[RMDB]
RNA sequence: GGGAACGACUCGAGUAGAGUCGAAAAGCAAUGACCUUCGGGUCAUUGCAAAAUAUAACAGGCAAGUUCCAGCCUGAAAAAGGAACAAAGAUCGAAAGAUCAAAAGGGGCAUCUUCGGAUGCCCCAACUAGUGACUUUAGUUCGCUAAAGUCACUAGAAAAGAAACAACAACAACAAC
Reactivity to 2A3 in 0.01 (KOAc 150mM, MgCl2 10mM, bicine 150mM(pH8.5), 24C), signal-to-noise 2, nucleotides 027 to 126: g000c010a000a020u000g000a010c010c030u030u060c210g050g000g000u000c000a000u010u000g000c000a000a000a020a000u040a000u000a040a140c100a000g000g000c020a090a110g010u020u000c010c020a000g020c010c000u010g070a030a000a000a000a010g010g010a030a010c030a080a120a070g000a000u000c000g020a060a040a040g010a010u030c020a010a050a020a110g010g000g000g000c000a010u020c000u070u060c130g060g000a000u010g010c010c000c000c000a000a000
Reactivity to DMS in 0.01 (KOAc 150mM, MgCl2 10mM, bicine 150mM(pH8.5), 24C), signal-to-noise 1, nucleotides 027 to 126: g030c000a000a000u000g000a000c000c000u010u000c120g060g020g010u010c000a000u000u010g000c000a010a010a030a040u000a140u020a150a140c180a000g000g010c000a030a110g000u000u000c000c010a100g000c000c010u000g000a000a050a010a050a080g000g010a020a030c010a170a080a110g000a000u010c000g000a150a060a190g000a010u000c010a080a050a090a080g020g010g010g020c020a010u000c000u000u000c140g010g000a030u000g030c000c000c000c000a000a010